[RMDB]
RNA sequence: GGGAACGACUCGAGUAGAGUCGAAAACCUCACUACAUUUUACUGUUCCUAAAGAAUUUGUGACAGGUACAGUAAAACGUAUUGCAAGGUUUCUCAGUUCCUAUAAACAGGUAAAUAACAAUAUAUGAAAAGCAAAGACUGUUCGCAGUCUUUGCAAGAGCGAUAAGUACUUCGGUACUUAUCGCUCAAAAGAAACAACAACAACAAC
Reactivity to 2A3 in 0.01 (KOAc 150mM, MgCl2 10mM, bicine 150mM(pH8.5), 24C), signal-to-noise 2, nucleotides 027 to 156: c000c010u020c010a000c000u010a000c000a040u000u000u000u000a000c000u010g040u030u070c010c010u110a180a110a080g160a260a240u170u200u230g120u070g020a080c090a080g010g000u000a010c000a000g000u000a000a000a000a000c000g000u010a000u020u020g010c050a040a050g020g000u000u030u000c130u010c060a010g000u020u020c000c000u000a060u160a080a110a010c020a010g000g120u080a070a160a090u210a120a070c030a180a010u210a050u120a130u160g080a060a160a020a040g000c000a000a000a000g000a000c000u000g040u050u050c150g000c020a010g000u000c000u000u010u000g000c000a050a010
Chemical mapping of a 207-nucleotide RNA with 2A3. The reactions ran in a buffer of 150 mM KOAc, 10 mM MgCl2 and 150 mM bicine (pH 8.5), at 24 C. For 2A3 the reverse transcriptase was SuperScript II with manganese.